The record gives the reactivity of an RNA of 177 nucleotides to 2A3 and DMS. Reactivities are rounded to 0.1 and cut off at 0 and 3. The reactions ran in a buffer of 150 mM KOAc, 10 mM MgCl2 and 150 mM bicine (pH 8.5), at 24 C. The data come from the RNA Mapping Database (RMDB), library OK1LIB. For DMS, 27,731 sequencing reads were counted.
[RMDB]
RNA sequence: GGGAACGACUCGAGUAGAGUCGAAAAUUAAAACAUGCCACACCAUAUUCUCCAACAACAGUUCGUGUGAAAGCUGGCGAAUACAGUGAUUGUCAUGAUGCGGAUCUAGUUGUCAUCUGUGCUGGUGUACAUCAACAAUGUUCGCAUUGUUGAUGUAAAAAGAAACAACAACAACAAC
Reactivity to 2A3 in 0.01 (KOAc 150mM, MgCl2 10mM, bicine 150mM(pH8.5), 24C), signal-to-noise 9, nucleotides 027 to 126: u120u080a040a040a030a040c110a080u150g010c020c010a010c000a000c020c020a010u010a080u150u030c050u020c020c010a030a040c000a010a010c000a050g060u060u040c030g020u070g020u050g150a090a030a020g020c030u020g040g000c050g040a040a020u140a070c040a010g050u050g110a150u130u130g080u080c030a050u080g100a050u090g040c020g020g000a020u040c030u060a060g030u020u030g070u050c040a070u030c120u080g050u050g030c100u030g000g030u040g020
Reactivity to DMS in 0.01 (KOAc 150mM, MgCl2 10mM, bicine 150mM(pH8.5), 24C), signal-to-noise 8, nucleotides 027 to 126: u020u050a050a070a090a120c130a060u010g000c020c010a030c030a050c010c060a160u010a070u000u010c010u010c010c030a090a050c070a060a080c100a060g010u010u030c070g020u020g010u010g010a060a070a140g020c050u000g000g000c060g000a060a040u010a080c100a060g010u010g000a100u020u010g000u000c020a050u010g000a070u000g010c050g000g000a040u010c050u000a070g010u000u000g020u010c060a040u020c060u020g020u000g000c060u000g010g010u020g020